Conditions: 150 mM KOAc, 10 mM MgCl2 and 150 mM bicine (pH 8.5), 24 C. Chemical mapping of a 177-nucleotide RNA with DMS and 2A3.

[RMDB]
RNA sequence: GGGAACGACUCGAGUAGAGUCGAAAAAUCGCCGCCGAAUCUGCUCGUGGGACAUCCCCUUCGAUGCUCCACUCGCCCCAAUCCGUCCUCCUCUCCUUGUUGCGGCACCCCCCUUCGCUGGCAGCGAUGACUCAUGUGAGUUCGCUCACAUGAGUCAAAAAGAAACAACAACAACAAC
Reactivity to DMS in 0.01 (KOAc 150mM, MgCl2 10mM, bicine 150mM(pH8.5), 24C), signal-to-noise 3, nucleotides 027 to 126: a090u030c050g030c000c040g030c060c020g000a050a040u000c030u000g000c030u010c050g020u010g020g050g000a120c150a120u000c010c000c020c130u020u020c110g030a080u020g000c030u000c010c030a070c060u000c050g000c000c010c010c050a090a080u020c080c050g020u010c020c020u000c030c030u000c010u000c040c040u000u010g010u010u030g000c020g000g010c080a160c040c010c020c020c000c010u000u020c010g010c030u010g000g020c090a100g010c030g000a050
Reactivity to 2A3 in 0.01 (KOAc 150mM, MgCl2 10mM, bicine 150mM(pH8.5), 24C), signal-to-noise 3, nucleotides 027 to 126: a000u080c050g010c010c010g010c000c010g040a040a060u030c030u060g010c010u020c020g000u040g010g030g020a020c010a060u060c000c000c010c020u030u110c060g040a050u090g010c030u010c030c020a030c000u040c040g020c000c000c000c000a000a050u040c030c020g020u010c010c010u000c010c000u020c010u020c000c010u020u080g030u020u040g010c000g010g000c020a020c010c000c000c000c000c000u000u020c010g010c010u020g070g000c060a030g000c030g050a040
Annotation: Reactivities are given for positions 27 through 126.